[RMDB]
RNA sequence: GGGAACGACUCGAGUAGAGUCGAAAAGAUAUGGAAUGGUAGGGAGCUCGACACUCGGAAACGAGUGGACUGAGCUUUGAUCUACCCGCUUCCUAAGUCAAAAGAAUUUACGUUCGCGUAAAUUCAACCAUCAUCCCUACUUCGGUAGGGAUGAUGGAAAAGAAACAACAACAACAAC
Reactivity to DMS in 0.01 (KOAc 150mM, MgCl2 10mM, bicine 150mM(pH8.5), 24C), signal-to-noise 1, nucleotides 027 to 126: g010a010u010a020u010g000g000a010a050u020g010g000u000a010g000g000g000a000g020c000u000c010g030a250c010a010c000u010c000g010g010a000a020a020c000g000a010g030u000g000g020a070c100u010g040a000g000c000u000u010u020g030a030u010c020u000a010c000c010c300g010c200u050u020c000c000u030a010a120g010u000c000a090a040a120a070g000a020a000u000u000u000a000c000g050u010u010c290g020c000g000u000a000a000a010u000u000c000a130a150

Chemical mapping of a 177-nucleotide RNA with DMS.
For DMS the reverse transcriptase was MarathonRT.